The record gives the reactivity of an RNA of 207 nucleotides to 2A3 and DMS. For DMS the reverse transcriptase was MarathonRT. Conditions: 150 mM KOAc, 10 mM MgCl2 and 150 mM bicine (pH 8.5), 24 C.
RNA sequence: GGGAACGACUCGAGUAGAGUCGAAAAGAUUCCUCGGUGUUGAGCGAGGUUUAAACAAAUCGACCACACAAACGUAGAGCCGACUACGGAUUUAUAAAUUAAGGCAUUAAGUGUGAUAAGGAGACAAAAAACGAUGUUGUGUUCGCACAACAUCGAACGGUAAAAGCUAGUUCGCUAGCUUUUACCGAAAAGAAACAACAACAACAAC
Reactivity to 2A3 in 0.01 (KOAc 150mM, MgCl2 10mM, bicine 150mM(pH8.5), 24C), signal-to-noise 2, nucleotides 027 to 156: g090a100u060u050c010c010u000c000g040g030u280g000u100u100g020a090g100c030g000a030g020g110u040u040u110a040a040a020c060a010a060a050u070c010g050a050c020c060a040c010a000c000a000a090a000c000g000u000a000g010a010g000c000c020g050a000c010u000a000c000g000g000a000u000u300u030a190u120a070a040a020u140u150a010a000g000g000c000a000u040u130a060a090g020u020g000u000g050a010u030a150a080g190g020a050g000a040c170a120a100a020a000a010a000c000g000a000u010g000u000u010g010u000g000u040u020c070g030c100a020c000a030a000c000a000u010c000g000a020a000
Reactivity to DMS in 0.01 (KOAc 150mM, MgCl2 10mM, bicine 150mM(pH8.5), 24C), signal-to-noise 2, nucleotides 027 to 156: g010a300u000u000c000c010u010c030g020g010u000g030u000u010g000a170g020c020g050a140g010g010u000u000u000a100a060a160c110a110a070a070u000c020g000a120c020c000a030c050a100c050a120a070a090c000g030u000a020g000a230g030c040c010g000a150c000u000a060c000g030g010a240u000u000u030a010u010a000a010a110u010u000a010a040g000g030c000a270u010u090a040a120g020u000g010u010g010a050u010a070a060g000g010a160g010a090c030a000a040a050a040a030a220c000g050a030u000g030u000u000g050u000g030u000u010c300g000c010a020c000a030a000c010a000u000c010g000a010a020

It was measured as part of the RMDB library M2RFPK.